[RMDB]
An RNA of 177 nucleotides, treated with DMS and 2A3 and read out base by base. The RNA was probed in 150 mM KOAc, 10 mM MgCl2 and 150 mM bicine (pH 8.5) at 24 C. The 2A3 profile rests on 499 reads. 2A3 adducts were read by reverse transcription with SuperScript II with manganese. The data come from the RNA Mapping Database (RMDB), library RFM100.
RNA sequence: GGGAACGACUCGAGUAGAGUCGAAAAUACGGUAGGUGUAUAACCAAUAAGGUUCUUGUACUAAGUGGCUCGGACAAUGAGGCCCUUCCGAAAGGAGAAGUUUGAACCGUGAGGGGAAAGCAACUGCCAGGGAAGUCGUUUUCGAACGACUUCCCUGAAAAGAAACAACAACAACAAC
Reactivity to DMS in 0.01 (KOAc 150mM, MgCl2 10mM, bicine 150mM(pH8.5), 24C), signal-to-noise 1, nucleotides 027 to 126: u000a020c240g010g010u000a000g000g010u000g020u000a000u000a180a230c010c000a060a070u000a140a130g000g000u000u000c000u000u010g010u030a060c040u000a120a190g070u090g020g000c000u000c030g000g000a300c180a140a120u000g000a130g020g000c000c020c000u090u000c010c000g040a070a110a200g000g050a050g000a110a000g000u020u000u000g000a040a000c020c030g000u030g020a280g000g010g000g010a040a060a290g000c030a000a000c030u010g000c070
Reactivity to 2A3 in 0.01 (KOAc 150mM, MgCl2 10mM, bicine 150mM(pH8.5), 24C), signal-to-noise 1, nucleotides 027 to 126: u190a030c100g020g000u070a000g000g000u150g000u090a110u000a090a000c010c000a010a030u200a080a040g000g000u060u030c030u030u030g040u000a010c000u040a110a000g030u200g180g000c010u010c040g030g000a090c140a100a060u300g020a040g070g190c020c020c000u050u000c010c000g080a050a070a020g060g000a020g000a070a000g000u050u090u000g000a000a000c000c040g000u120g060a160g000g030g050g000a000a070a000g010c000a000a000c000u030g050c000